Background: Source: RMDB library OK1LIB, as collected in RNAgym. The record gives the reactivity of an RNA of 177 nucleotides to DMS and 2A3. In probing experiments dimethyl sulfate is read out at A N1 and C N3, which are open when not base-paired. Reactivities are given for positions 27 through 126. The 2A3 profile rests on 6,605 reads. Conditions: 150 mM KOAc, 10 mM MgCl2 and 150 mM bicine (pH 8.5), 24 C. DMS adducts were read by reverse transcription with MarathonRT. For 2A3 the reverse transcriptase was SuperScript II with manganese.

RNA sequence: GGGAACGACUCGAGUAGAGUCGAAAAGAAAAAGAAAACAAAAGGACCGCCCAACAGGGGCGGGGCGAACGAUUGCAAAAGCUUCGUUGUGCCCCAUGGCCAUACGGACAGCCGGGUCCACUGCCGACGACUUGUUGGACUUCGGUCCAGCAAGUCGAAAAGAAACAACAACAACAAC
Reactivity to DMS in 0.01 (KOAc 150mM, MgCl2 10mM, bicine 150mM(pH8.5), 24C), signal-to-noise 2, nucleotides 027 to 126: g000a060a070a080a060a090g010a140a110a180a120c080a060a080a080a120g000g000a010c000c000g000c030c010c010a130a080c180a140g020g010g000g020c010g000g000g000g020c000g010a020a000c000g000a010u040u030g010c010a130a060a150a110g010c000u020u000c010g010u000u010g010u040g000c000c000c000c000a130u080g000g000c000c000a030u000a080c000g000g000a010c010a160g010c010c020g000g000g010u010c000c000a170c150u010g000c040c010g000a300
Reactivity to 2A3 in 0.01 (KOAc 150mM, MgCl2 10mM, bicine 150mM(pH8.5), 24C), signal-to-noise 5, nucleotides 027 to 126: g040a010a060a010a010a020g130a030a130a010a020c090a020a130a030a010g000g000a000c000c000g030c000c000c000a120a140c120a150g000g000g060g000c000g000g000g000g000c000g000a010a000c000g030a060u050u270g020c020a140a170a120a170g010c010u000u000c000g010u010u020g140u100g090c000c000c000c000a040u210g020g000c000c010a010u030a090c030g000g020a010c000a000g000c000c000g020g000g000u000c000c000a000c000u040g000c000c000g010a010